[RMDB]
RNA sequence: GGGAACGACUCGAGUAGAGUCGAAAACUUGUAUGCCAUCUCUGAGCACCGCGCCACCAAGCAGUGGCCAUCGAUUAAGCCAAUGGUCGACUGGGCUUAUGAAUCAUGGGCUGAUGAUACUCAGAUGCCACCCCAUGAUGUUCGCAUCAUGGGGUGGAAAAGAAACAACAACAACAAC
Reactivity to DMS in 0.01 (KOAc 150mM, MgCl2 10mM, bicine 150mM(pH8.5), 24C), signal-to-noise 1, nucleotides 027 to 126: c030u000u010g010u030a100u010g000c050c060a160u010c120u000c030u000g000a080g000c080a060c090c090g010c120g010c000c030a050c070c090a120a170g030c090a050g050u000g000g000c020c060a020u000c050g000a090u000u000a040a030g010c040c070a120a100u020g000g010u000c010g020a050c190u010g000g000g000c010u000u000a020u000g000a130a040u000c030a030u000g020g000g000c030u000g000a120u050g010a110u000a160c100u000c010a030g000a050u030g020
Reactivity to 2A3 in 0.01 (KOAc 150mM, MgCl2 10mM, bicine 150mM(pH8.5), 24C), signal-to-noise 1, nucleotides 027 to 126: c000u060u060g040u060a090u090g050c030c000a100u080c030u000c020u000g010a000g050c000a050c080c060g030c070g020c000c020a040c010c000a140a040g060c020a030g030u020g020g010c000c000a020u060c020g060a050u020u070a010a020g030c030c010a060a080u100g050g050u050c010g020a060c140u030g000g070g000c000u060u080a080u150g130a090a060u080c030a140u100g030g110g040c010u040g000a030u080g030a050u020a030c010u050c080a030g020a120u070g060
The data come from the RNA Mapping Database (RMDB), library OK2TST. Chemical mapping of a 177-nucleotide RNA with DMS and 2A3. For DMS, 655 sequencing reads were counted.